Conditions: 150 mM KOAc, 10 mM MgCl2 and 150 mM bicine (pH 8.5), 24 C. Chemical mapping of a 177-nucleotide RNA with DMS and 2A3. For DMS, 1,802 sequencing reads were counted. For 2A3 the reverse transcriptase was SuperScript II with manganese. Source: RMDB library M2PK50, as collected in RNAgym.

[RMDB]
RNA sequence: GGGAACGACUCGAGUAGAGUCGAAAAUACGCGAGGUUCGCCUCGCGUAAAAGAGGAGCGUAAACGUGAGCCUACGUAGUGCUGUACAUCGUUCCUACACGAAUGCACAUGGUUUCGACCAUGUGAAGCAAACUUAACGGUUCGCCGUUAAGUUUGCAAAAGAAACAACAACAACAAC
Reactivity to DMS in 0.01 (KOAc 150mM, MgCl2 10mM, bicine 150mM(pH8.5), 24C), signal-to-noise 2, nucleotides 027 to 126: u000a000c000g010c000g020a010g000g000u010u020c260g020c000c010u000c010g000c010g000u000a000a030a060a180g030a060g000g000a020g040c010g020u010a020a060a070c120g000u000g030a080g000c020c030u000a150c300g000u010a020g000u010g020c020u000g030u000a080c050a110u000c030g010u000u000c010c020u000a040c190a080c140g000a060a070u010g030c000a030c000a020u000g000g000u000u000u010c160g010a040c000c000a010u000g020u000g000a060a090
Reactivity to 2A3 in 0.01 (KOAc 150mM, MgCl2 10mM, bicine 150mM(pH8.5), 24C), signal-to-noise 3, nucleotides 027 to 126: u030a000c000g000c010g010a000g030g010u040u060c160g070c050c000u000c000g000c000g000u000a000a010a000a000g100a000g010g010a000g000c040g050u140a120a070a070c090g000u060g050a000g020c010c030u100a120c160g250u210a030g040u070g130c030u010g050u070a010c010a030u030c000g000u020u000c000c010u030a030c090a000c020g210a130a050u200g020c000a000c000a000u010g000g020u020u070u100c190g060a010c000c020a000u000g000u000g010a010a000